Annotation: The record gives the reactivity of an RNA of 207 nucleotides to DMS and 2A3.
RNA sequence: GGGAACGACUCGAGUAGAGUCGAAAAAUAGAGGGAAAUGUGGCUAUGAUCUUAAGGAUGAGUUUUUGGCGGCAUCCACUGAAAAGAUGUAAAAAGUAGGAGAGUAACUUGAGUGCAUAGACUAGGCAUGUCAAGACCUCAAGGGAAGAGGUAGUUAGGAUAAUAUGGGGUUCGCCCCAUAUUAUCCAAAAGAAACAACAACAACAAC
Reactivity to DMS in 0.01 (KOAc 150mM, MgCl2 10mM, bicine 150mM(pH8.5), 24C), signal-to-noise 2, nucleotides 027 to 156: a090u000a100g010a090g050g030g010a030a080a050u010g030u000g020g030c040u000a070u000g020a050u000c010u000u010a090a100g010g000a110u000g010a090g020u000u000u000u000u000g020g020c040g000g020c040a030u000c010c050a130c070u010g010a100a090a090a050g010a030u000g020u010a040a080a070a100a040g040u000a060g020g010a060g010a110g010u010a050a060c030u010u010g020a080g000u000g010c030a190u000a190g000a080c090u000a110g010g030c040a070u000g040u010c010a100a130g020a040c040c010u000c030a050a080g000g010g020a080a080g010a050g010g000u010a030g000u000u000a150
Reactivity to 2A3 in 0.01 (KOAc 150mM, MgCl2 10mM, bicine 150mM(pH8.5), 24C), signal-to-noise 6, nucleotides 027 to 156: a000u160a020g040a040g000g020g030a040a060a060u130g030u050g010g010c030u050a040u150g030a050u060c050u120u140a080a070g050g010a050u060g040a070g060u060u040u040u110u120g050g010c040g010g000c010a010u000c030c020a030c010u020g020a030a030a030a030g040a010u070g010u160a070a100a040a010a020g060u070a030g020g030a030g010a010g030u030a040a020c010u020u020g010a000g040u050g010c030a060u060a120g060a040c050u050a050g020g080c010a010u070g070u180c020a020a010g030a050c010c010u040c050a020a040g060g000g010a030a040g020a000g020g010u030a020g050u050u130a040